[RMDB]
RNA sequence: GGGAACGACUCGAGUAGAGUCGAAAAGAACGCGAGGAGCAUGUCUCCGAGAUGCUGAACACCUUCAACUGGACGGAGAUCAGGAAAGAGGUGGUUGACUCGUUUACUGAGGACUGUGAACGCAACGGGACGUACGCGUACAACUACUCGCUGAAGGUAGAUGCUAACCUUUCGAGGUUAGCAUCUAAAAAGAAACAACAACAACAAC
Reactivity to DMS in 0.01 (KOAc 150mM, MgCl2 10mM, bicine 150mM(pH8.5), 24C), signal-to-noise 2, nucleotides 027 to 156: g000a100a120c130g030c020g020a100g000g010a120g010c060a120u000g030u000c000u000c000c010g000a170g030a120u010g020c040u000g020a030a140c060a090c040c010u000u010c020a070a180c020u010g030g000a260c050g020g010a090g010a120u000c040a080g040g020a040a100a100g000a020g000g000u000g020g010u030u020g010a180c000u010c020g020u000u000u010a100c090u000g000a110g030g030a120c070u010g020u010g030a040a070c030g070c040a080a080c060g000g010g010a060c050g020u000a030c070g080c050g030u000a110c110a060a060c020u000a030c010u000c010g030c040u000g020a080a090g040g020
Reactivity to 2A3 in 0.01 (KOAc 150mM, MgCl2 10mM, bicine 150mM(pH8.5), 24C), signal-to-noise 5, nucleotides 027 to 156: g060a060a010c060g030c030g020a020g020g080a050g040c070a120u130g040u020c100u030c080c000g020a070g020a050u110g000c070u070g040a080a010c020a040c040c010u090u080c010a080a080c020u050g060g010a060c040g130g060a090g020a100u080c030a020g040g060a090a070a030g050a020g020g020u060g010g010u040u070g070a080c010u010c020g040u040u080u100a090c090u080g050a050g070g050a040c070u070g050u020g100a070a020c030g030c030a050a080c020g020g000g040a030c020g030u050a040c050g020c020g060u040a040c010a060a010c020u100a070c000u010c020g010c070u070g030a050a020g070g010